[RMDB]
Chemical mapping of a 177-nucleotide RNA with 2A3 and DMS. Values cover nucleotides 27 to 126. The 2A3 profile rests on 20,673 reads.
RNA sequence: GGGAACGACUCGAGUAGAGUCGAAAACCACCGCCGACUGUCUCUUCACCGACGUGCUGCGCGACAACAAAUCCGUGCUCAAGGUGUGGAAUGCGAAUGCGUGCAAUGCGGUGGUGGGCGCGUUCAAUCUAAGUCCAUUUUUCGAAAUGGACUUAGAAAAAGAAACAACAACAACAAC
Reactivity to 2A3 in 0.01 (KOAc 150mM, MgCl2 10mM, bicine 150mM(pH8.5), 24C), signal-to-noise 9, nucleotides 027 to 126: c010c000a010c000c010g020c000c020g110a270c130u110g040u100c020u000c010u130u040c010a010c020c010g060a110c200g020u030g000c040u100g000c020g040c080g050a040c020a260a010c020a020a110a010u000c010c000g010u030g000c000u020c050a090a070g030g000u010g000u020g020g050a100a080u100g010c030g080a240a060u190g040c030g010u060g030c030a030a100u130g040c000g010g000u010g000g010u010g000g020g000c060g010c040g000u040u090c020a060a090
Reactivity to DMS in 0.01 (KOAc 150mM, MgCl2 10mM, bicine 150mM(pH8.5), 24C), signal-to-noise 8, nucleotides 027 to 126: c010c000a050c040c010g010c010c030g000a130c120u010g010u000c100u000c030u010u000c040a030c030c020g010a180c190g010u000g020c050u010g010c010g010c080g000a050c080a070a110c300a070a110a200u000c010c000g020u000g010c010u010c060a140a250g010g010u000g020u000g000g010a030a130u000g020c100g000a080a070u010g010c010g030u000g010c030a070a060u010g010c020g010g010u000g010g010u000g010g000g010c080g000c100g010u000u000c050a100a170

The RNA was probed in 150 mM KOAc, 10 mM MgCl2 and 150 mM bicine (pH 8.5) at 24 C.
For DMS the reverse transcriptase was MarathonRT.
The DMS profile rests on 11,447 reads.